Chemical mapping of a 177-nucleotide RNA with 2A3 and DMS. 2A3 adducts were read by reverse transcription with SuperScript II with manganese. The DMS profile rests on 688 reads.
[RMDB]
RNA sequence: GGGAACGACUCGAGUAGAGUCGAAAAAAGUCUUGCAGUACGAUCCUCUCCACGGACUGCGGUCGCCAACAUAUGGUCUAAAUGUGACCUUCAACCGACGGAAUGUCGAUGAUUCCAAACGAGCGAGGUCAGCAUGAUCGUUCGCGAUCAUGCUGACAAAAGAAACAACAACAACAAC
Reactivity to 2A3 in 0.01 (KOAc 150mM, MgCl2 10mM, bicine 150mM(pH8.5), 24C), signal-to-noise 1, nucleotides 027 to 126: a010a000g020u010c020u030u060g000c010a020g000u040a010c010g030a040u040c020c030u000c020u000c010c030a050c020g050g010a020c050u010g000c000g000g000u020c070g000c010c010a040a000c010a110u170a150u160g040g000u020c030u150a120a160a060u230g030u080g040a010c000c000u010u050c090a090a050c030c010g010a010c010g080g100a170a040u110g060u030c090g000a030u100g000a010u060u040c010c030a040a100a060c060g020a000g070c090g010a010g090
Reactivity to DMS in 0.01 (KOAc 150mM, MgCl2 10mM, bicine 150mM(pH8.5), 24C), signal-to-noise 1, nucleotides 027 to 126: a090a030g040u000c000u000u000g000c000a030g010u020a010c030g010a130u010c030c030u020c030u030c000c050a150c040g010g010a050c040u010g050c040g000g000u000c030g000c030c030a060a020c240a040u000a130u010g010g010u000c020u000a050a150a150u000g050u000g000a050c010c000u000u000c060a210a110c090c010g010a170c050g000g010a100a020u000g000u000c070g010a110u030g000a030u000u000c020c050a030a110a210c190g000a030g000c110g000a010g000